[RMDB]
RNA sequence: GGGAACGACUCGAGUAGAGUCGAAAAGAAAAUAAAGCGCACCUAUAAGGUGGUGCGCUACAAGCGUGACCUAGGAACACGCAUCCACGCGUCUCCUAAGACGCGAAAGGUAUUCCAAAUAAAAAAACAUACUUCAUACCUUCGGGUAUGAAGUAUGAAAAGAAACAACAACAACAAC
Reactivity to 2A3 in 0.01 (KOAc 150mM, MgCl2 10mM, bicine 150mM(pH8.5), 24C), signal-to-noise 2, nucleotides 027 to 126: g010a000a090a010a020u230a090a170a020g030c000g000c000a000c010c010u130a070u060a300a030g140g030u100g000g020u000g050c000g000c010u010a010c030a020a050g000c010g010u000g000a050c010c120u120a110g110g070a120a000c030a000c000g000c000a030u040c000c000a060c040g010c000g000u000c000u010c030c030u110a160a030g000a000c000g000c000g000a050a020a000g050g000u030a100u060u100c020c030a010a140a160u210a080a080a020a010a000a000a000
Reactivity to DMS in 0.01 (KOAc 150mM, MgCl2 10mM, bicine 150mM(pH8.5), 24C), signal-to-noise 2, nucleotides 027 to 126: g010a070a120a120a110u000a060a130a090g010c000g020c020a000c010c000u000a240u010a120a130g010g020u000g000g000u000g000c000g020c020u030a000c190a050a070g020c000g020u020g000a050c110c090u010a130g000g000a100a100c030a010c020g000c010a080u000c040c040a230c000g000c000g040u030c020u000c260c120u000a130a080g000a020c000g000c000g000a020a050a110g000g020u000a050u000u010c000c000a040a070a190u050a010a020a010a060a090a110a250

Overview
An RNA of 177 nucleotides, treated with 2A3 and DMS and read out base by base. Source: RMDB library M2PK90, as collected in RNAgym. Conditions: 150 mM KOAc, 10 mM MgCl2 and 150 mM bicine (pH 8.5), 24 C. The 2A3 profile rests on 1,525 reads. The DMS profile rests on 923 reads.